The record gives the reactivity of an RNA of 177 nucleotides to DMS and 2A3. For 2A3, 1,160 sequencing reads were counted. It was measured as part of the RMDB library OK2TRN. The RNA was probed in 150 mM KOAc, 10 mM MgCl2 and 150 mM bicine (pH 8.5) at 24 C.
[RMDB]
RNA sequence: GGGAACGACUCGAGUAGAGUCGAAAAUAUGAACACUUAGACUCAGAGGCUGUUAUCCAUCAAAGCAAUAAGUUCCAUAUUUGCAAACCCCGUUUUGAGAGUGUGGAAUUUCAGGUCCAAGGGUUUGUAUCCAGUGAACUUUCGAGUUCACUGGAUAAAAAGAAACAACAACAACAAC
Reactivity to DMS in 0.01 (KOAc 150mM, MgCl2 10mM, bicine 150mM(pH8.5), 24C), signal-to-noise 3, nucleotides 027 to 126: u000a040u010g000a070a060c050a050c040u010u000a070g010a060c060u000c100a130g010a120g000g010c030u010g010u010u010a080u020c130c070a050u020c120a060a130a060g000c050a050a080u000a060a100g010u000u000c030c000a020u000a030u000u000u010g010c040a040a020a050c060c130c120c210g000u010u000u000u010g000a110g000a030g010u010g020u000g000g000a020a030u000u010u010c090a120g020g000u010c010c040a030a070g000g010g030u010u000u010g020
Reactivity to 2A3 in 0.01 (KOAc 150mM, MgCl2 10mM, bicine 150mM(pH8.5), 24C), signal-to-noise 1, nucleotides 027 to 126: u240a050u060g000a030a000c010a000c040u040u020a030g040a010c010u000c110a020g040a040g110g010c050u020g030u160u130a060u020c040c010a050u100c050a060a140a020g050c020a030a150u060a280a020g010u020u040c010c000a030u000a050u010u020u010g050c030a010a030a070c070c090c040c130g000u030u070u000u100g030a060g000a000g030u070g010u010g010g000a010a000u010u070u100c060a000g000g060u000c000c010a000a020g000g000g000u050u110u040g000